Chemical mapping of a 207-nucleotide RNA with 2A3.
RNA sequence: GGGAACGACUCGAGUAGAGUCGAAAAUACCAUGAAGCCAAUCACAGCCUAUGCUCCUGCUAUUGAAUCUGGUGUUUAUACUUCUACUGCUCAGUCGACUAAUGACUCAGUCUAUUAUUGGCCUGGAACCACUACCCAAUUGUUUAACUGGGACCUAGUACCGACGCUCCUUCGGGAGCGUCGGUACAAAAGAAACAACAACAACAAC
Reactivity to 2A3 in 0.01 (KOAc 150mM, MgCl2 10mM, bicine 150mM(pH8.5), 24C), signal-to-noise 1, nucleotides 027 to 156: u110a000c000c010a060u070g060a050a000g090c030c030a030a020u110c010a030c080a100g030c020c010u060a040u110g020c030u010c010c000u040g070c060u070a060u110u180g100a070a060u100c040u040g020g020u040g100u070u160u000a080u020a090c000u030u070c000u040a110c000u040g040c020u030c040a030g030u020c000g040a070c040u060a000a110u150g020a010c010u010c030a010g010u030c010u050a110u070u120a070u110u100g030g030c000c000u040g030g040a040a060c040c010a030c030u040a040c000c000c000a000a090u030u100g120u020u150u070a040a060c030u030g000g000g000a020c030c000u040a010
It was measured as part of the RMDB library OK3TST.